[RMDB]
RNA sequence: GGGAACGACUCGAGUAGAGUCGAAAAGAUAUGGACCGACAACAGCCUACGGUUUCGGAAACGAAAUUAGGACAUGUCGUGUCCUAAGUCAAAGUCACAUAAGGUUCUUCGGAACCUUAUGUGACAAGAUUCUGCAAAUCUUCGGAUUUGCAGAAUCAAAAGAAACAACAACAACAAC
Reactivity to 2A3 in 0.01 (KOAc 150mM, MgCl2 10mM, bicine 150mM(pH8.5), 24C), signal-to-noise 1, nucleotides 027 to 126: g030a020u050a030u140g000g020a000c020c000g010a000c020a160a030c060a060g090c000c000u090a070c170g070g030u000u000u000c020g050g000a100a020a010c000g000a000a020a010u040u070a040g000g000a060c050a100u120g020u050c040g080u120g020u170c020c010u020a100a000g030u020c040a090a070a030g000u000c000a000c000a000u020a000a000g010g010u000u010c000u000u190c300g070g000a000a000c000c000u000u000a010u000g000u000g020a020c010a000a000
Reactivity to DMS in 0.01 (KOAc 150mM, MgCl2 10mM, bicine 150mM(pH8.5), 24C), signal-to-noise 2, nucleotides 027 to 126: g010a060u000a290u020g000g000a000c000c000g010a030c080a040a110c230a170g010c010c010u000a010c300g010g010u000u000u000c010g000g010a080a050a250c020g000a030a000a040u000u000a050g000g020a030c120a130u000g000u000c010g030u030g010u000c000c010u000a000a060g000u020c060a080a120a100g000u000c010a010c000a000u000a000a020g010g020u010u000c000u000u000c160g030g000a010a000c010c000u000u000a000u000g030u010g010a000c010a000a040
An RNA of 177 nucleotides, treated with 2A3 and DMS and read out base by base.
High DMS reactivity at an A or C suggests that its Watson-Crick edge is free.
For 2A3, 2,183 sequencing reads were counted.
The RNA was probed in 150 mM KOAc, 10 mM MgCl2 and 150 mM bicine (pH 8.5) at 24 C.
For DMS, 1,183 sequencing reads were counted.